An RNA of 177 nucleotides, treated with DMS and 2A3 and read out base by base. DMS adducts were read by reverse transcription with MarathonRT. Reactivities are given for positions 27 through 126. Source: RMDB library OK2TST, as collected in RNAgym.
RNA sequence: GGGAACGACUCGAGUAGAGUCGAAAAUACACUGCUCUUGCUUUAGCUACUUGCAUAUCUCUGAAAUACAAUAUCUCUAUGGUAUUGAGGAGGAAAGAACUAAAACAUCCGAACCAAACAGAUAGAAAUCGUAAUCGCAAUUCGUUGCGAUUACGAUAAAAGAAACAACAACAACAAC
Reactivity to DMS in 0.01 (KOAc 150mM, MgCl2 10mM, bicine 150mM(pH8.5), 24C), signal-to-noise 1, nucleotides 027 to 126: u010a140c050a040c140u010g000c010u000c020u000u000g020c070u000u000u000a080g000c000u010a090c020u000u020g010c110a140u000a110u000c000u000c000u020g000a080a040a090u000a050c000a070a020u000a010u000c130u000c200u000a090u010g000g030u000a060u000u010g010a300g000g000a040g000g000a020a070a030g020a050a030c060u000a050a020a020a030c060a020u010c050c000g050a120a130c050c030a050a050a090c190a050g030a060u000a070g040a100a050
Reactivity to 2A3 in 0.01 (KOAc 150mM, MgCl2 10mM, bicine 150mM(pH8.5), 24C), signal-to-noise 1, nucleotides 027 to 126: u080a000c060a020c070u030g020c000u000c020u000u030g030c020u090u090u040a030g010c020u030a050c040u060u050g010c060a110u030a190u060c010u000c000u010g040a050a040a010u150a030c010a030a030u010a040u130c080u000c040u100a040u160g000g000u010a020u030u050g020a040g040g020a000g000g000a040a060a000g010a040a040c050u120a100a040a000a010c020a040u000c040c010g020a010a000c030c000a130a000a000c010a020g070a120u100a020g090a060a190